[RMDB]
RNA sequence: GGGAACGACUCGAGUAGAGUCGAAAAUAUGCGAUAGCGAUACGCAUAGCGCGCGCGAUACGCAUACGCAUAAUACGCAUACGCUAUUAUAUACGCCGCAUAUAUAUAGCGGCGAUACGCUAUGCGUUAAAGAGGGAAUAUUCGUAUUCCCUCUUUAAAAAGAAACAACAACAACAAC
Reactivity to DMS in 0.01 (KOAc 150mM, MgCl2 10mM, bicine 150mM(pH8.5), 24C), signal-to-noise 9, nucleotides 027 to 126: u000a020u000g010c010g020a070u010a070g010c040g010a110u010a060c020g000c010a100u010a100g010c080g020c100g010c060g010c030g010a090u000a060c020g010c010a030u010a040c040g010c030a030u000a050a090u010a050c040g010c010a040u000a060c170g010c030u000a080u010u010a110u010a100u000a240c030g020c010c010g020c010a110u000a130u010a140u010a090u010a110g010c000g010g000c010g010a010u000a020c180g000c020u000a010u000g010c000g010u000
Reactivity to 2A3 in 0.01 (KOAc 150mM, MgCl2 10mM, bicine 150mM(pH8.5), 24C), signal-to-noise 9, nucleotides 027 to 126: u070a000u010g010c010g050a040u140a090g020c020g050a060u060a240c010g010c040a030u080a120g110c110g000c010g000c010g010c020g100a070u090a200c010g000c020a010u050a160c010g000c010a030u060a110a080u130a200c020g000c010a010u020a050c110g000c040u030a040u290u060a090u110a010u020a130c010g010c000c000g010c120a010u180a000u030a010u020a010u060a280g000c000g000g010c000g000a000u010a010c010g000c000u000a000u010g010c000g010u000